[RMDB]
RNA sequence: GGGAACGACUCGAGUAGAGUCGAAAACAUUGGCAUUUCGAUGCCAAUGGGUCUGCGACGCGCGGCCGCCGAGUCGUUCCCGCGGCCGCGUGACGCAGUUUGGGCAGCUCGAGUUCGCUCGAGCUAAUGAUUAUUAUACAUUCGUGUAUAAUAAUCAAAAAGAAACAACAACAACAAC
Reactivity to 2A3 in 0.01 (KOAc 150mM, MgCl2 10mM, bicine 150mM(pH8.5), 24C), signal-to-noise 2, nucleotides 027 to 126: c000a000u000u010g010g000c000a010u010u070u110c240g100a010u010g000c010c010a000a000u000g000g000g050u040c000u010g010c000g010a030c000g000c010g010c000g010g020c000c000g030c050c150g080a080g030u000c010g000u000u000c000c000c000g010c010g000g000c000c090g000c020g000u000g000a000c000g000c000a000g000u010u110u030g010g020g010c060a020g000c010u000c000g010a000g000u060u070c130g040c010u000c010g010a020g010c000u020a030a030
Reactivity to DMS in 0.01 (KOAc 150mM, MgCl2 10mM, bicine 150mM(pH8.5), 24C), signal-to-noise 7, nucleotides 027 to 126: c010a010u000u000g000g000c000a010u000u000u010c170g010a030u000g010c000c000a000a000u000g000g010g000u000c010u000g010c010g010a040c010g010c010g010c000g010g010c000c000g030c010c170g000a100g010u000c010g010u000u000c000c000c000g040c010g010g010c000c000g030c010g040u000g010a030c010g020c000a010g000u000u000u000g000g010g020c190a050g010c000u000c000g000a020g010u000u010c210g020c000u000c000g010a010g010c000u000a010a050